[RMDB]
RNA sequence: GGGAACGACUCGAGUAGAGUCGAAAAUUCUAGAUGUAGCUUUGUGACAUUUGGAUGUGAUACUUGGCUUUGUGGUAAUGGGAUGUGAUAUUUGGAGCUGUGGCAGCCAUCUUGGGCCAGGAUGGGACGGUAUGAAGAACUUCGGUUCUUCAUACCGAAAAGAAACAACAACAACAAC
Reactivity to DMS in 0.01 (KOAc 150mM, MgCl2 10mM, bicine 150mM(pH8.5), 24C), signal-to-noise 3, nucleotides 027 to 126: u010u000c000u000a050g000a060u000g010u000a040g010c120u010u000u020g030u010g010a050c030a030u000u010u000g010g000a030u000g020u000g020a120u010a050c080u000u000g010g000c040u010u000u010g010u000g000g020u010a060a090u020g010g000g010a080u010g020u000g000a070u000a100u010u010u010g010g000a070g000c080u000g030u010g000g000c080a080g010c030c030a030u010c040u000u010g010g000g010c040c030a070g000g000a070u010g020g000g000a160
Reactivity to 2A3 in 0.01 (KOAc 150mM, MgCl2 10mM, bicine 150mM(pH8.5), 24C), signal-to-noise 2, nucleotides 027 to 126: u040u000c000u000a030g020a080u050g030u050a050g090c110u140u250u150g120u160g060a000c020a040u040u000u020g070g010a050u050g050u030g140a030u030a140c040u040u030g040g000c010u060u110u110g090u030g050g020u100a090a110u080g050g020g020a000u020g060u030g100a030u030a130u190u140u130g060g020a000g050c040u030g050u020g120g000c010a030g010c000c000a010u000c020u010u060g030g030g000c010c000a020g000g010a000u040g020g020g010a020